[RMDB]
An RNA of 177 nucleotides, treated with 2A3 and DMS and read out base by base. It was measured as part of the RMDB library RFM100. DMS adducts were read by reverse transcription with MarathonRT. The DMS profile rests on 1,010 reads.
RNA sequence: GGGAACGACUCGAGUAGAGUCGAAAAUUCUGCCCUAUCAGCUUGAUGGUAGUGUAUUGGCCUACCAUGGCGUUAACGGGUAACGGAGAAUUAGGGUUCGAUUCCGGAGAGGGAGCCUGAGAGACGGGAGCCUUACAAGCUUCGGCUUGUAAGGCUCAAAAGAAACAACAACAACAAC
Reactivity to 2A3 in 0.01 (KOAc 150mM, MgCl2 10mM, bicine 150mM(pH8.5), 24C), signal-to-noise 2, nucleotides 027 to 126: u020u010c000u010g000c000c000c000u060a010u050c090a050g030c000u040u140g190a000u020g020g010u020a050g020u000g000u240a180u070u230g120g160c000c000u000a000c000c000a000u020g000g000c010g040u010u130a040a190c040g050g000g000u000a040a020c060g100g050a030g050a170a000u110u060a030g100g000g080u010u060c000g110a130u150u000c050c000g010g010a060g000a000g000g000g010a000g030c030c000u100g070a110g000a000g030a030c000g030g040
Reactivity to DMS in 0.01 (KOAc 150mM, MgCl2 10mM, bicine 150mM(pH8.5), 24C), signal-to-noise 1, nucleotides 027 to 126: u000u000c050u000g000c000c000c000u020a100u030c250a190g050c020u020u030g010a000u000g000g060u000a000g000u090g050u000a190u030u000g010g020c170c000u000a060c000c020a020u040g000g000c000g000u020u000a090a160c300g020g000g000u030a050a140c140g050g020a040g000a010a030u020u000a160g000g000g000u120u000c030g000a110u090u010c090c000g010g010a060g000a080g030g000g000a120g000c090c010u000g000a040g000a000g000a000c130g020g000